An RNA of 177 nucleotides, treated with DMS and 2A3 and read out base by base. The DMS profile rests on 3,172 reads. The 2A3 profile rests on 1,868 reads. The RNA was probed in 150 mM KOAc, 10 mM MgCl2 and 150 mM bicine (pH 8.5) at 24 C. Source: RMDB library RFMREP, as collected in RNAgym. For 2A3 the reverse transcriptase was SuperScript II with manganese.
RNA sequence: GGGAACGACUCGAGUAGAGUCGAAAAGCUAAGUGCGGACGGGAUAAGCGCUGAAAGCAUCUAAGCGCCAAGCCCUUCCCAAGAUGAGUUUUCCCUACAGGUUCGUGGAAGACCACCACGUUGAUAGCUUUUGCAUUAACUUCGGUUAAUGCAAAAGAAAAGAAACAACAACAACAAC
Reactivity to DMS in 0.01 (KOAc 150mM, MgCl2 10mM, bicine 150mM(pH8.5), 24C), signal-to-noise 5, nucleotides 027 to 126: g010c000u010a110a160g020u020g020c130g020g010a110c100g000g000g000a030u010a220a260g010c010g030c000u000g010a120a130a140g020c170a080u010c080u000a180a040g000c000g010c010c030a070a140g020c000c000c000u010u000c000c000c010a090a050g000a120u000g000a020g000u000u020u000u000c000c020c000u000a120c190a140g000g010u000u000c030g020u000g010g000a060a070g020a170c240c110a120c010c010a010c010g020u000u000g010a180u020a100g000
Reactivity to 2A3 in 0.01 (KOAc 150mM, MgCl2 10mM, bicine 150mM(pH8.5), 24C), signal-to-noise 2, nucleotides 027 to 126: g030c010u030a090a030g070u050g060c080g040g000a010c000g010g000g000a010u020a100a020g000c000g000c000u000g010a060a100a000g070c020a050u100c050u080a060a000g010c000g030c000c010a050a060g010c000c000c000u000u010c010c010c010a000a010g110a080u120g010a010g000u000u020u000u010c000c030c010u010a050c090a130g130g150u040u100c010g000u030g020g040a300a080g080a170c020c000a020c000c020a010c050g050u090u090g060a100u110a090g020